Structure probing data (2A3 and DMS) for a 177-nucleotide construct. The DMS profile rests on 801 reads.
RNA sequence: GGGAACGACUCGAGUAGAGUCGAAAACUGCUAACACUAAAGUUCUUAGGAACAAGGGUGUUGAUUAUACUAAGAAGUUUCUUACAGUUGACGGUGUGCAAUAUUAUUGCUACACGUCUAAGGACACCCUCUCCUAUCUGUUCGCAGAUAGGAGAGGAAAAGAAACAACAACAACAAC
Reactivity to 2A3 in 0.01 (KOAc 150mM, MgCl2 10mM, bicine 150mM(pH8.5), 24C), signal-to-noise 1, nucleotides 027 to 126: c000u050g000c090u120a030a010c000a030c010u080a040a070a110g000u000u000c000u030u060a170g130g000a000a000c040a050a050g160g020g010u060g090u030u000g010a030u000u200a280u090a230c080u140a110a090g060a080a020g110u000u040u000c030u010u100a070c030a080g000u030u030g010a000c040g060g120u030g000u010g000c000a000a040u070a110u300u120a090u120u000g000c000u030a010c040a000c030g010u000c000u010a010a040g070g000a000c000a030c020
Reactivity to DMS in 0.01 (KOAc 150mM, MgCl2 10mM, bicine 150mM(pH8.5), 24C), signal-to-noise 1, nucleotides 027 to 126: c030u000g010c120u000a030a060c030a070c020u020a030a200a210g000u000u000c010u000u020a250g010g020a010a020c040a070a240g000g010g020u000g000u000u000g020a150u010u000a090u000a150c110u010a050a040g000a090a290g000u000u000u000c000u000u000a150c150a080g000u020u010g000a020c010g020g000u010g020u010g010c000a000a000u000a180u000u020a050u000u000g000c000u000a020c000a020c000g000u000c000u010a030a050g000g000a080c290a060c130

The reactions ran in a buffer of 150 mM KOAc, 10 mM MgCl2 and 150 mM bicine (pH 8.5), at 24 C. The data come from the RNA Mapping Database (RMDB), library 15KREP.